[RMDB]
RNA sequence: GGGAACGACUCGAGUAGAGUCGAAAAGAUAUGGACCAUUUGUCAGGUCUAUAGCCGUCGGAAACGACGGAACUACUUAAGACCUUGGAUUUAAUGGUCCUAAGUCAAAGCGCACUUCGGUGCGCAAGUACAUAUUAAGGUUCGCCUUAAUAUGUACAAAAGAAACAACAACAACAAC
Reactivity to 2A3 in 0.01 (KOAc 150mM, MgCl2 10mM, bicine 150mM(pH8.5), 24C), signal-to-noise 9, nucleotides 027 to 126: g030a020u070a050u160g000g000a000c000c000a010u010u000u020g030u020c020a000g010g000u010c000u000a010u020a010g020c000c000g000u000c010g030g020a090a060a080c010g000a000c010g010g010a020a020c020u120a010c010u090u150a080a010g000a000c000c000u070u240g240g010a070u300u300u220a020a010u010g000g000u010c000c000u010a080a010g010u000c040a030a100a050g000c000g000c000a010c010u060u130c300g060g000u000g000c000g000c000a000a010
Reactivity to DMS in 0.01 (KOAc 150mM, MgCl2 10mM, bicine 150mM(pH8.5), 24C), signal-to-noise 9, nucleotides 027 to 126: g000a070u000a300u010g010g000a010c000c000a040u000u000u000g010u000c050a040g000g000u000c000u000a130u000a010g000c000c000g010u000c000g010g010a120a110a220c000g010a020c000g000g000a020a020c060u010a170c140u000u000a130a040g000a010c000c000u000u010g020g010a050u000u010u000a020a020u000g000g010u000c000c000u000a010a070g010u010c080a080a100a130g000c000g010c000a010c000u000u010c170g020g010u000g000c000g010c000a000a030

Source information: Conditions: 150 mM KOAc, 10 mM MgCl2 and 150 mM bicine (pH 8.5), 24 C. Structure probing data (2A3 and DMS) for a 177-nucleotide construct. Values are in units of 0.01, from 0 to 300, in steps of 10. 2A3 is a SHAPE reagent: it acylates the 2'-hydroxyl of flexible nucleotides of all four kinds. It was measured as part of the RMDB library TTRDEL. The 2A3 profile rests on 83,630 reads.